[RMDB]
RNA sequence: GGGAACGACUCGAGUAGAGUCGAAAACAAGCGGCUCAAGGAUGAAGAAGAAGGCACGUGCAGGCGUGUACAAGCCUACUGCCAACAUCGAAGGUGAAGUUGACUUGAAGAGGAUAGGACAUUAUCAGGACCGAGUAUCAUUCGUGAUACUCGGUCCAAAAGAAACAACAACAACAAC
Reactivity to 2A3 in 0.01 (KOAc 150mM, MgCl2 10mM, bicine 150mM(pH8.5), 24C), signal-to-noise 2, nucleotides 027 to 126: c010a000a060g070c000g000g000c000u010c070a100a050g050g000a090u140g020a060a200g020a000a020g030a000a050g050g030c040a000c130g060u100g000c150a000g110g040c060g040u140g000u050a120c060a060a180g000c000c050u050a010c000u050g040c000c000a070a070c000a120u080c020g000a030a060g110g050u090g120a010a000g020u040u100g100a240c040u040u010g010a060a040g010a020g000g000a040u030a180g140g020a040c030a120u100u130a160u160c050a100
Reactivity to DMS in 0.01 (KOAc 150mM, MgCl2 10mM, bicine 150mM(pH8.5), 24C), signal-to-noise 1, nucleotides 027 to 126: c000a070a010g000c070g010g070c000u000c030a070a070g020g030a000u000g050a090a070g000a020a050g000a020a100g020g000c070a040c290g000u000g010c040a000g060g040c280g010u000g000u000a050c190a240a300g020c000c010u000a010c000u000g000c090c000a000a160c060a000u010c000g010a110a100g070g000u040g040a130a000g000u000u000g000a000c070u000u040g000a040a030g000a160g000g000a000u000a000g000g000a040c200a000u020u000a050u090c140a140